[RMDB]
RNA sequence: GGGAACGACUCGAGUAGAGUCGAAAAGAUAUGGAGUCGAUAAGACAUAGUUCAACAGCUCGGAAACGAGACAUGAACGAAUGUCUUUUGACGACUCCUAAGUCAAAGCGGAGGUUCGCCUCCGCAAGUUAAUCGUUACCUUCGGGUAACGAUUAACAAAAGAAACAACAACAACAAC
Reactivity to 2A3 in 0.01 (KOAc 150mM, MgCl2 10mM, bicine 150mM(pH8.5), 24C), signal-to-noise 2, nucleotides 027 to 126: g010a000u050a040u190g000g000a000g000u000c020g000a080u030a090a010g000a000c010a010u030a000g000u000u000c010a080a070c050a240g060c000u010c000g040g030a090a100a050c030g010a020g030a070c050a160u110g020a010a020c000g050a030a120u010g010u000c000u030u070u050u120g240a110c040g000a000c000u000c000c000u020a100a020g030u030c060a130a060a020g000c010g000g000a000g010g000u000u210c230g140c030c010u000c000c000g000c010a000a000
Reactivity to DMS in 0.01 (KOAc 150mM, MgCl2 10mM, bicine 150mM(pH8.5), 24C), signal-to-noise 3, nucleotides 027 to 126: g000a040u010a300u000g000g010a000g010u000c000g030a140u000a030a000g010a010c010a020u000a170g010u010u000c000a000a060c300a160g000c000u000c000g020g000a060a120a210c020g000a010g010a020c060a150u010g000a000a000c000g000a110a050u010g000u000c000u010u000u000u000g020a170c110g000a000c010u000c000c000u020a000a070g000u000c010a050a080a100g000c000g000g000a020g000g020u000u010c280g010c010c010u010c000c000g000c000a010a010